The record gives the reactivity of an RNA of 177 nucleotides to 2A3 and DMS. It was measured as part of the RMDB library OK2TRN. For DMS, 8,466 sequencing reads were counted. Values cover nucleotides 27 to 126. The reactions ran in a buffer of 150 mM KOAc, 10 mM MgCl2 and 150 mM bicine (pH 8.5), at 24 C.

RNA sequence: GGGAACGACUCGAGUAGAGUCGAAAAUCAUGAUGAGGGUCACGAUGCCCAGGCCCGCUCCCUCGGUGACGUCGUAGGCGGUGGUGAGGGCCUCCUCCAGGGUCUCGAAGAGCCGCGCCCUCGCCACGGCCUCCUAAGCAUUCGUGCUUAGGAGGCCAAAAGAAACAACAACAACAAC
Reactivity to 2A3 in 0.01 (KOAc 150mM, MgCl2 10mM, bicine 150mM(pH8.5), 24C), signal-to-noise 4, nucleotides 027 to 126: u070c020a040u130g080a040u140g040a090g040g050g010u030c040a010c070g060a040u120g020c010c000c010a000g040g010c000c030c020g030c040u020c000c010c000u050c050g060g040u070g060a070c030g030u050c040g000u040a080g030g100c090g050g000u010g010g030u010g010a020g000g020g000c000c000u030c010c000u030c030c000a070g090g030g080u030c060u040c090g210a200a090g000a030g050c010c030g030c040g000c020c000c000u000c010g000c010c000a010c010
Reactivity to DMS in 0.01 (KOAc 150mM, MgCl2 10mM, bicine 150mM(pH8.5), 24C), signal-to-noise 6, nucleotides 027 to 126: u010c070a070u010g010a110u000g010a110g010g010g010u000c030a060c090g010a090u000g010c020c010c040a100g010g000c050c020c030g000c060u010c050c010c010u000c060g000g010u000g010a080c070g010u000c050g010u000a080g010g020c080g020g030u000g000g020u010g000a030g000g010g020c000c030u000c040c020u000c030c060a180g000g010g010u010c060u000c030g010a160a150g000a050g010c050c020g020c160g020c000c000c000u000c010g000c010c010a020c050